[RMDB]
Description
Conditions: 150 mM KOAc, 10 mM MgCl2 and 150 mM bicine (pH 8.5), 24 C. The record gives the reactivity of an RNA of 177 nucleotides to 2A3. For 2A3 the reverse transcriptase was SuperScript II with manganese.

RNA sequence: GGGAACGACUCGAGUAGAGUCGAAAAUACUGGUAUAUAUGAGGAUAACUAGCUUUAUAGGCCAGACAUUUCCUCACACUCCUUUGGAAGGACAUUUGUGGAGUAGGCGUGACCUCAUGCCUGCAUACGCCACGGAUACUUUCGAGUAUCCGUGGCGAAAAGAAACAACAACAACAAC
Reactivity to 2A3 in 0.01 (KOAc 150mM, MgCl2 10mM, bicine 150mM(pH8.5), 24C), signal-to-noise 2, nucleotides 027 to 126: u120a020c000u000g000g030u000a090u020a000u000a040u130g080a000g030g060a120u070a300a300c160u070a110g070c030u020u210u000a000u050a180g000g000c000c000a000g040a060c060a130u000u000u000c000c000u030c010a000c000a000c040u000c000c000u000u000u080g040g130a050a030g000g010a010c030a220u070u300u110g000u020g040g020a140g010u020a000g020g000c040g000u000g020a300c090c020u240c010a010u010g000c000c000u000g000c000a050u090a100